[RMDB]
This 177-nucleotide RNA was probed chemically with DMS. DMS adducts were read by reverse transcription with MarathonRT. It was measured as part of the RMDB library TTRDEL. The DMS profile rests on 1,355 reads.
RNA sequence: GGGAACGACUCGAGUAGAGUCGAAAAGAUAUGGACCUGAACGUGGACAACAGCUCGGAAACGAGACAUGUCCCGUUUCAGGUCCUAAGUCAAAACAGAGGCUACCUGUUCGCAGGUAGCCUCUGAACAGGAUAGUCGAGUUCGCUCGACUAUCCUGAAAAGAAACAACAACAACAAC
Reactivity to DMS in 0.01 (KOAc 150mM, MgCl2 10mM, bicine 150mM(pH8.5), 24C), signal-to-noise 2, nucleotides 027 to 126: g020a050u010a300u000g000g000a000c000c000u000g000a010a010c000g000u010g000g020a010c000a020a100c270a170g010c010u000c000g040g000a110a080a200c000g020a000g030a070c050a120u000g010u000c000c000c000g000u020u010u000c000a000g020g000u000c010c000u000a010a100g020u020c020a080a060a120a230c050a020g000a000g010g020c000u000a010c020c000u000g030u000u060c150g000c010a000g010g000u000a020g020c000c000u000c000u000g000a030a070